[RMDB]
RNA sequence: GGGAACGACUCGAGUAGAGUCGAAAAACUGCGGUAUUCGUACCGCAGUACAUAAAAAGGAUAAAAUACCAGUAGCCGGAAACGCAAGCGAGCACUACUGGCGCAAGAACCACUUCGGUGGUUCUAACUAUCCGAGUAUGUUCGCAUACUCGGAUAGAAAAGAAACAACAACAACAAC
Reactivity to DMS in 0.01 (KOAc 150mM, MgCl2 10mM, bicine 150mM(pH8.5), 24C), signal-to-noise 3, nucleotides 027 to 126: a020c000u000g000c000g020g020u000a010u020u000c210g030u010a000c000c010g030c000a000g000u000a010c120a090u010a060a060a060a100a070g010g020a170u020a040a050a070a130u020a120c010c010a020g000u000a030g030c200c020g000g000a050a080a060c090g010c230a090a080g020c040g000a240g000c170a140c010u000a010c000u010g010g010c080g010c190a100a020g000a010a010c000c000a010c010u010u020c200g020g020u000g000g010u000u000c010u010a020a100
Reactivity to 2A3 in 0.01 (KOAc 150mM, MgCl2 10mM, bicine 150mM(pH8.5), 24C), signal-to-noise 3, nucleotides 027 to 126: a000c010u000g000c000g030g010u010a020u020u100c160g010u040a020c000c000g000c000a000g000u000a010c000a000u300a050a100a020a010a010g140g020a080u200a220a200a080a010u170a120c020c010a000g030u020a010g040c060c030g130g000a190a130a030c100g020c120a080a000g150c030g080a040g040c030a010c060u020a000c010u020g020g000c020g010c040a030a010g000a000a000c000c010a010c010u010u040c140g090g000u000g000g000u020u000c000u010a000a000